An RNA of 170 nucleotides, treated with 2A3 and DMS and read out base by base.
Conditions: 150 mM KOAc, 10 mM MgCl2 and 150 mM bicine (pH 8.5), 24 C.
Reactivities are given for positions 27 through 129.
The DMS profile rests on 98,211 reads.
It was measured as part of the RMDB library 15KLIB.
RNA sequence: GGGAACGACUCGAGUAGAGUCGAAAAAGCUUACCUAGGAAUCUCUUCUGCUUGUGACGGUCUUGCUUCAGCUUAUAGGGCGAAUUCCUUUGAUGUACCUACAUUCUGCGCAAACCGUUCUGCAAUGGUCACAUCGAGUUCGCUCGAUGUAAAAGAAACAACAACAACAAC
Reactivity to 2A3 in 0.01 (KOAc 150mM, MgCl2 10mM, bicine 150mM(pH8.5), 24C), signal-to-noise 9, nucleotides 027 to 129: a000g060c070u090u080a090c010c010u020a020g070g100a100a070u030c030u010c000u140u030c030u050g040c020u060u100g040u090g060a010c020g000g010u020c090u100u020g010c000u140u140c010a000g000c010u050u040a030u060a060g010g020g010c040g070a080a090u120u160c040c000u100u050u210g100a110u110g030u140a210c000c000u020a020c020a070u060u040c010u050g000c010g000c020a010a040a060c020c010g030u030u020c010u020g000c000a010a080u080g020g020u070c050
Reactivity to DMS in 0.01 (KOAc 150mM, MgCl2 10mM, bicine 150mM(pH8.5), 24C), signal-to-noise 9, nucleotides 027 to 129: a050g030c110u010u030a070c010c000u010a080g020g020a100a060u010c040u000c060u000u000c040u000g010c080u010u040g010u000g000a010c090g040g010u010c120u000u000g000c000u000u040c040a060g010c040u010u010a070u010a020g020g000g000c050g000a050a050u020u010c050c170u030u040u050g010a080u000g020u010a060c050c000u000a060c100a050u000u030c050u000g030c300g010c080a050a050a060c130c030g040u040u020c020u030g000c010a060a070u030g000g000u030c090